[RMDB]
RNA sequence: GGGAACGACUCGAGUAGAGUCGAAAAUGUCACUUAAAGUGAGUACAAUUGUCACUUAAAGUGAGUACAAUGUGUUCGCACAUUGUACUCACUGUCAGUAAGUGACCUGACACUGUUCGCACAUUGUACUCACAGUCAGUAAGUGACCUGACAAAAACGUUUCCAGGUAUUUCGAUACCUGGAAACGAAAAGAAACAACAACAACAAC
Reactivity to 2A3 in 0.01 (KOAc 150mM, MgCl2 10mM, bicine 150mM(pH8.5), 24C), signal-to-noise 3, nucleotides 027 to 156: u080g000u000c000a000c040u110u210a080a070a070g000u010g000a000g000u000a000c000a000a010u080u100g020u010c000a000c020u020u030a130a010a020g020u000g010a010g000u000a000c000a000a010u010g030u020g030u050u150c180g040c120a000c000a000u030u030g010u030a000c000u000c000a000c000u000g000u010c020a020g110u050a050a010g010u010g030a010c000c030u050g010a020c050a070c300u190g090u250u060c040g010c050a020c010a080u000u000g000u010a000c010u000c000a000c000a000g000u000c000a010g030u080a190a010g000u000g020a000c000c010u010g000a010c010a060a040a070a060a000
Reactivity to DMS in 0.01 (KOAc 150mM, MgCl2 10mM, bicine 150mM(pH8.5), 24C), signal-to-noise 2, nucleotides 027 to 156: u010g000u000c000a000c000u000u000a030a070a230g000u000g010a050g020u000a010c010a000a030u000u000g010u000c000a000c000u000u000a040a080a010g010u000g010a030g020u010a000c000a000a000u010g070u010g010u010u000c300g090c020a030c000a000u000u000g010u000a010c000u000c000a000c010u000g000u000c170a250g030u000a020a000g010u000g010a040c000c140u000g000a150c110a070c120u010g020u000u020c060g000c080a090c170a040u000u020g010u000a020c020u000c000a000c000a080g030u000c100a140g020u010a030a030g010u010g020a000c020c090u000g010a180c080a030a060a060a140a130
Chemical mapping of a 207-nucleotide RNA with 2A3 and DMS. The RNA was probed in 150 mM KOAc, 10 mM MgCl2 and 150 mM bicine (pH 8.5) at 24 C. For DMS, 2,516 sequencing reads were counted. The 2A3 profile rests on 2,053 reads. For DMS the reverse transcriptase was MarathonRT. Reactivities are given for positions 27 through 156.